Structure probing data (2A3 and DMS) for a 207-nucleotide construct. The 2A3 profile rests on 861 reads. Source: RMDB library OK3TST, as collected in RNAgym. Values cover nucleotides 27 to 156. The RNA was probed in 150 mM KOAc, 10 mM MgCl2 and 150 mM bicine (pH 8.5) at 24 C.
[RMDB]
RNA sequence: GGGAACGACUCGAGUAGAGUCGAAAAAAUACAACGUAAAAUAUCUAGCAAAGAUUCUAUGUCUAAAAACAGAAAUAGCAAGAGAUCCGUACGCGGUAAUAAAUAGAAACGUACUACUGAGAUAUACUACCGAUAUAGAGUAUAAUGAUUUAGUUACAUUAGAAUGUGAGUUCGCUCACAUUCUAAUAAAAGAAACAACAACAACAAC
Reactivity to 2A3 in 0.01 (KOAc 150mM, MgCl2 10mM, bicine 150mM(pH8.5), 24C), signal-to-noise 1, nucleotides 027 to 156: a000a000u200a000c060a070a000c020g060u070a080a060a100a080u090a010u090c010u060a000g130c020a060a110a080g010a090u060u000c040u050a090u130g050u000c040u080a050a110a000a100a050c040a010g030a030a170a050u120a080g030c040a040a040g030a010g000a050u010c060c030g030u020a000c100g020c020g160g060u040a050a120u080a140a150a000u120a010g040a020a020a020c040g010u000a000c020u010a010c000u010g070a010g050a070u030a010u000a140c020u050a020c000c000g030a020u050a020u030a130g070a010g010u000a020u090a190a100u070g070a040u070u030u040a050g010u000u040a000c000
Reactivity to DMS in 0.01 (KOAc 150mM, MgCl2 10mM, bicine 150mM(pH8.5), 24C), signal-to-noise 1, nucleotides 027 to 156: a040a050u020a120c060a060a080c080g000u000a080a120a040a090u000a030u000c010u000a160g040c030a150a070a190g000a120u020u000c030u000a010u000g010u020c030u020a010a080a050a120a180c060a180g000a100a080a070u010a060g060c020a080a140g000a100g000a040u000c120c070g010u000a030c030g030c000g000g050u000a020a020u000a050a070a180u010a130g010a130a120a060c030g030u000a010c010u000a080c000u000g010a120g000a060u000a020u000a060c020u000a120c030c020g000a140u020a060u000a080g000a080g000u000a050u010a050a070u010g020a140u000u010u000a090g000u000u000a050c130